[RMDB]
RNA sequence: GGGAACGACUCGAGUAGAGUCGAAAAGUCAUGGGAAAACUCAAGCUAGCUCAUCAGAAGUACAAGUGAGGGGCUGGGGUUGUGACUCAGUGGUAGAGCAUUUGCCUAGCAUGUGUGAGGCACUGGGGUCACUCCAUGUAUUCGUACAUGGAGUGACAAAAGAAACAACAACAACAAC
Reactivity to DMS in 0.01 (KOAc 150mM, MgCl2 10mM, bicine 150mM(pH8.5), 24C), signal-to-noise 4, nucleotides 027 to 126: g010u000c040a080u000g010g010g000a100a040a060a060c010u000c060a080a050g020c030u000a090g020c010u000c020a060u000c050a080g010a130a150g020u010a070c190a100a150g020u010g010a050g000g000g000g020c010u010g010g000g010g000u000u000g000u000g010a160c020u000c000a010g010u000g000g010u000a050g000a260g010c000a050u000u010u000g010c010c090u010a080g010c030a040u000g000u000g010u000g000a300g000g000c020a030c050u000g010g000g010
Reactivity to 2A3 in 0.01 (KOAc 150mM, MgCl2 10mM, bicine 150mM(pH8.5), 24C), signal-to-noise 3, nucleotides 027 to 126: g040u030c020a080u080g000g000g090a080a180a040a020c030u020c040a070a010g040c000u060a010g100c020u020c010a080u020c030a030g130a280a010g150u180a130c040a090a130g030u020g040a030g050g010g000g000c020u010g000g000g000g000u020u070g030u020g030a010c010u010c020a030g010u050g090g300u070a030g000a010g050c010a030u020u020u080g020c050c110u030a050g000c010a010u060g020u000g030u070g030a060g050g000c000a000c000u020g000g020g030
An RNA of 177 nucleotides, treated with DMS and 2A3 and read out base by base. For DMS, 3,099 sequencing reads were counted. The reactions ran in a buffer of 150 mM KOAc, 10 mM MgCl2 and 150 mM bicine (pH 8.5), at 24 C. 2A3 adducts were read by reverse transcription with SuperScript II with manganese.